[RMDB]
RNA sequence: GGGAACGACUCGAGUAGAGUCGAAAAGAGUGAUGUAGUUACAAACUCUCCAGAGCCAUAAUUAGAGCAAACUAAUUGAAGUUGUGUUUUGACACACUUUCCAAAUUCACGGGUGCCGGAUGACAUAGUUGAAUGGCUGUUUCGACAGCCAUUCAACAAAAGAAACAACAACAACAAC
Reactivity to 2A3 in 0.01 (KOAc 150mM, MgCl2 10mM, bicine 150mM(pH8.5), 24C), signal-to-noise 2, nucleotides 027 to 126: g080a000g000u210g020a170u060g010u100a080g040u140u130a080c080a050a060a010c000u000c000u030c020c000a030g040a080g090c000c000a020u060a120a010u010u040a010g000a030g120c110a090a120a010c000u000a000a040u030u070g010a020a000g100u130u100g030u040g050u040u110u050u300g100a020c000a000c030a000c090u000u010u030c060c000a010a110a280u090u050c050a030c150g010g060g000u020g000c000c020g090g030a000u090g010a010c000a020u110a040
Reactivity to DMS in 0.01 (KOAc 150mM, MgCl2 10mM, bicine 150mM(pH8.5), 24C), signal-to-noise 1, nucleotides 027 to 126: g000a020g000u000g000a210u030g000u010a200g000u000u060a080c080a010a110a280c000u000c000u000c000c070a100g000a050g000c090c000a100u000a020a050u000u000a020g000a040g000c150a070a110a290c010u000a070a170u000u000g000a000a070g070u040u020g000u000g000u000u000u000u000g010a020c020a020c050a000c030u000u000u010c020c070a110a120a110u020u000c160a030c010g020g000g010u000g000c070c010g000g020a010u000g000a000c070a140u040a060